[RMDB]
RNA sequence: GGGAACGACUCGAGUAGAGUCGAAAACAUCCAUGCAGUGCUGAUUCCAGGUGCCCCAAUGCCUGCGUGACUGGGGUAUAUACAGAUGGAUAUCCUAUUGUAUUCCACAAUAAUCACUCUAUCGCAGGUAGCAAGACCUAUUCGUAGGUCUUGCUACAAAAGAAACAACAACAACAAC
Reactivity to 2A3 in 0.01 (KOAc 150mM, MgCl2 10mM, bicine 150mM(pH8.5), 24C), signal-to-noise 3, nucleotides 027 to 126: c050a040u040c010c000a030u140g080c070a040g080u040g070c020u070g030a160u130u080c070c030a030g060g000u030g040c020c000c000c010a000a030u080g040c010c010u030g040c030g010u030g000a020c070u010g000g010g000g010u010a010u010a010u010a010c040a020g120a110u050g030g000a030u040a060u110c020c000u050a120u070u070g040u020a100u170u110c060c030a020c030a060a060u100a080a050u120c050a020c160u030c060u090a040u100c030g000c020a000g000
Reactivity to DMS in 0.01 (KOAc 150mM, MgCl2 10mM, bicine 150mM(pH8.5), 24C), signal-to-noise 2, nucleotides 027 to 126: c150a110u000c030c000a050u000g020c090a080g020u000g000c070u000g010a140u010u000c070c070a090g010g030u000g010c050c010c020c010a100a140u000g000c000c010u000g000c060g020u000g010a120c140u000g000g000g000g030u000a040u030a060u000a100c160a090g000a060u000g010g010a060u010a060u000c080c140u000a060u010u010g010u010a090u000u020c070c040a090c080a030a030u000a030a080u000c110a050c100u000c070u010a120u010c030g000c040a040g030